The data come from the RNA Mapping Database (RMDB), library OK3TST. An RNA of 207 nucleotides, treated with 2A3 and DMS and read out base by base. 2A3 adducts were read by reverse transcription with SuperScript II with manganese. Values cover nucleotides 27 to 156. DMS adducts were read by reverse transcription with MarathonRT. Reactivities are rounded to 0.1 and cut off at 0 and 3.

[RMDB]
RNA sequence: GGGAACGACUCGAGUAGAGUCGAAAAGAAAGAAAGAGAAGUAGUAGCGCAACUGUUGAUGUUUGAGUUGCAGCCAGCAUCUACACAUGGAGUAAGAAUCACCCCGAAAUCCAGCAAAUCACAAUCAUGCACUGGAAAAACCUUAUAUGAUUUGUAAGCAUAGUAAUUAGUUCGCUAAUUACUAUGCAAAAGAAACAACAACAACAAC
Reactivity to 2A3 in 0.01 (KOAc 150mM, MgCl2 10mM, bicine 150mM(pH8.5), 24C), signal-to-noise 6, nucleotides 027 to 156: g040a020a050a010g070a030a060a000g070a000g030a130a010g010u070a000g000u030a030g020c020g010c040a020a040c050u040g050u110u040g070a080u070g070u050u140u150g080a040g010u030u040g000c030a010g030c030c010a010g010c010a040u010c010u050a010c050a010c010a070u080g040g010a040g020u070a100a020g060a060a050u060c020a090c000c020c010c010g020a060a060a020u020c020c010a010g010c050a030a060a090u150c050a050c030a090a080u080c030a010u110g010c070a030c080u020g000g000a030a050a040a030a040c030c000u110u070a110u060a030u220g070a090u070u110u130g050u090a100a020
Reactivity to DMS in 0.01 (KOAc 150mM, MgCl2 10mM, bicine 150mM(pH8.5), 24C), signal-to-noise 3, nucleotides 027 to 156: g010a150a100a110g020a080a080a120g000a120g010a070a070g000u000a040g010u010a100g020c070g020c020a100a050c030u010g030u000u000g030a080u000g020u000u010u010g020a130g020u020u000g000c020a100g030c010c030a100g060c040a080u010c020u010a040c050a050c050a140u000g000g000a080g000u010a060a090g010a100a090u000c030a090c060c020c000c040g010a070a110a210u000c030c010a050g000c040a040a180a080u000c040a050c050a030a100u010c030a060u010g010c100a060c030u040g010g000a040a070a040a050a060c040c030u000u000a080u010a060u000g010a070u000u000u000g020u000a090a300